[RMDB]
RNA sequence: GGGAACGACUCGAGUAGAGUCGAAAAGAUAUGGACAGCGGGAGGAACUACACGUGGCUUUCGGAAACGAAAGCCCGUGCCGAAGAACGCUGUCCUAAGUCAAAAUCCAGUCGUUCGCGACUGGAAAUCAUAUAAUACGCUUCGGCGUAUUAUAUGAAAAAGAAACAACAACAACAAC
Reactivity to 2A3 in 0.01 (KOAc 150mM, MgCl2 10mM, bicine 150mM(pH8.5), 24C), signal-to-noise 3, nucleotides 027 to 126: g010a010u050a040u130g000g000a000c000a010g000c010g050g000g020a040g050g020a090a040c120u260a060c290a000c050g170u280g010g000c000u000u000u000c010g010g050a060a080a050c010g000a010a000a000g040c020c000c000g000u000g000c010c000g110a150a010g000a040a010c010g010c010u010g000u000c000c000u000a000a010g000u010c010a000a020a010a240u010c010c000a000g000u010c000g030u040u100c300g020c020g190a000c010u000g000g000a040a000a000
Reactivity to DMS in 0.01 (KOAc 150mM, MgCl2 10mM, bicine 150mM(pH8.5), 24C), signal-to-noise 4, nucleotides 027 to 126: g000a030u010a300u010g000g000a000c000a010g000c000g020g000g000a120g000g020a100a020c040u010a290c000a000c000g000u030g040g010c010u000u000u000c010g000g000a080a070a180c020g000a000a010a000g000c020c000c000g000u000g000c010c030g000a090a150g010a210a250c000g000c000u000g000u000c000c000u000a000a090g010u000c040a110a080a130a120u010c000c000a000g000u000c000g010u000u010c250g020c030g010a020c000u000g000g000a010a010a060